[RMDB]
This 177-nucleotide RNA was probed chemically with DMS and 2A3. The DMS profile rests on 2,329 reads. The 2A3 profile rests on 2,323 reads. Values cover nucleotides 27 to 126.
RNA sequence: GGGAACGACUCGAGUAGAGUCGAAAAAUCAUCUGGCAUGAUUAAGCCAAAUGCUCUUCUUUGUGCUACUUGCCCCUUUGCUAAGGGUGAUAGCUGUUCUUCUAAUUGCAAACAUUCAGUUGCUCAGGUACUGCUAAUGGUUCGCCAUUAGCAGUACAAAAGAAACAACAACAACAAC
Reactivity to DMS in 0.01 (KOAc 150mM, MgCl2 10mM, bicine 150mM(pH8.5), 24C), signal-to-noise 3, nucleotides 027 to 126: a030u010c020a000u000c040u000g000g030c020a130u010g020a160u030u020a140a130g000c020c010a020a030a030u000g010c050u000c020u000u000c050u000u010u000g020u030g030c010u010a010c220u000u010g000c030c010c000c050u000u000u000g000c100u020a210a120g000g010g010u000g000a020u020a000g010c000u010g020u000u000c010u000u010c180u020a090a120u010u000g000c010a030a080a080c160a130u010u000c130a060g000u000u010g020c040u000c200a130g010
Reactivity to 2A3 in 0.01 (KOAc 150mM, MgCl2 10mM, bicine 150mM(pH8.5), 24C), signal-to-noise 3, nucleotides 027 to 126: a000u300c000a000u020c000u010g030g000c020a040u070g060a210u300u120a130a050g010c030c000a020a010a000u030g000c010u000c000u070u000c000u060u050u090g060u060g020c010u000a040c070u010u030g000c000c000c000c000u010u040u070g030c050u040a020a010g020g000g020u010g010a020u010a000g000c000u020g050u000u040c030u050u020c020u070a120a130u130u110g010c030a030a080a060c030a090u120u200c040a060g010u020u030g000c010u020c040a030g030